The record gives the reactivity of an RNA of 170 nucleotides to 2A3 and DMS. The RNA was probed in 150 mM KOAc, 10 mM MgCl2 and 150 mM bicine (pH 8.5) at 24 C. Values are in units of 0.01, from 0 to 300, in steps of 10. For DMS, 32,203 sequencing reads were counted. Source: RMDB library 15KLIB, as collected in RNAgym.
RNA sequence: GGGAACGACUCGAGUAGAGUCGAAAAGCUGGGCAACAUUCCGAGGGGACCGUCCCCUCGGUAAUGGCGAAUGGGACCCAGAAAUCUCUCUAGAUUCCGAUAGAGAAUCGAGAGAAAACUGGCUCUCUAAGAGAAUUGUUCGCAAUUCUCAAAAGAAACAACAACAACAAC
Reactivity to 2A3 in 0.01 (KOAc 150mM, MgCl2 10mM, bicine 150mM(pH8.5), 24C), signal-to-noise 9, nucleotides 027 to 129: g050c050u110g010g040g030c020a080a030c000a070u020u000c000c000g010a010g000g000g000g020a060c040c070g300u300c020c010c000c000u000c000g000g000u000a000a000u000g000g000c030g070a080a070u090g000g000g010a020c000c000c000a000g000a050a140a000u000c010u000c000u000c020u040a090g000a020u000u000c000c040g150a220u140a180g180a030g000a030a000u000c000g000a000g000a000g000a010a000a000a030c000u010g010g000c000u000c000u000c020u070a160a020
Reactivity to DMS in 0.01 (KOAc 150mM, MgCl2 10mM, bicine 150mM(pH8.5), 24C), signal-to-noise 6, nucleotides 027 to 129: g000c000u000g000g000g000c080a020a020c010a060u000u030c000c000g000a000g000g010g000g010a300c210c300g010u070c030c050c000c010u030c000g050g010u000a010a000u030g000g000c110g000a090a070u050g000g010g000a000c180c010c010a000g000a030a100a080u010c030u010c010u030c020u050a130g020a030u000u020c000c030g020a210u040a140g040a180g030a020a000u000c000g000a010g010a000g040a020a020a060a110c040u000g000g030c170u020c010u000c010u070a080a060